[RMDB]
Source: RMDB library TTRDEL, as collected in RNAgym. The record gives the reactivity of an RNA of 177 nucleotides to DMS and 2A3. The reactions ran in a buffer of 150 mM KOAc, 10 mM MgCl2 and 150 mM bicine (pH 8.5), at 24 C.
RNA sequence: GGGAACGACUCGAGUAGAGUCGAAAAGAUAUGGAAAUGAACUACACGCGAAAGGAGCGACGAUCUCGGAAACGAGGGAGCUCCUAAGCGUGCAUUUCCUAAGUCAAAACACCUGUUCGCAGGUGAACGGGAAUAAGAUCUUCGGAUCUUAUUCCCGAAAAGAAACAACAACAACAAC
Reactivity to DMS in 0.01 (KOAc 150mM, MgCl2 10mM, bicine 150mM(pH8.5), 24C), signal-to-noise 1, nucleotides 027 to 126: g000a040u000a300u000g000g000a010a010a000u000g010a160a050c180u030a300c000a010c000g020c010g000a140a070a080g030g000a000g020c000g000a040c270g000a080u010c000u000c000g000g000a230a010a210c000g000a000g060g000g000a020g000c000u000c000c000u000a000a140g040c010g030u000g000c000a000u000u000u000c000c000u010a020a200g000u010c040a100a030a080a120c020a000c000c050u000g000u000u030c140g000c000a010g000g000u000g010a040a120
Reactivity to 2A3 in 0.01 (KOAc 150mM, MgCl2 10mM, bicine 150mM(pH8.5), 24C), signal-to-noise 1, nucleotides 027 to 126: g000a010u010a060u130g000g000a030a030a000u020g000a050a040c100u220a000c300a000c040g020c030g020a260a220a070g000g030a000g000c000g220a180c000g010a080u030c010u010c000g050g040a080a080a060c010g000a030g010g020g000a010g000c000u020c040c000u000a000a000g040c010g000u020g000c000a000u020u030u030c020c000u010a110a020g070u040c020a040a070a120a130c010a010c000c000u000g010u050u070c300g020c150a000g020g020u050g010a070a060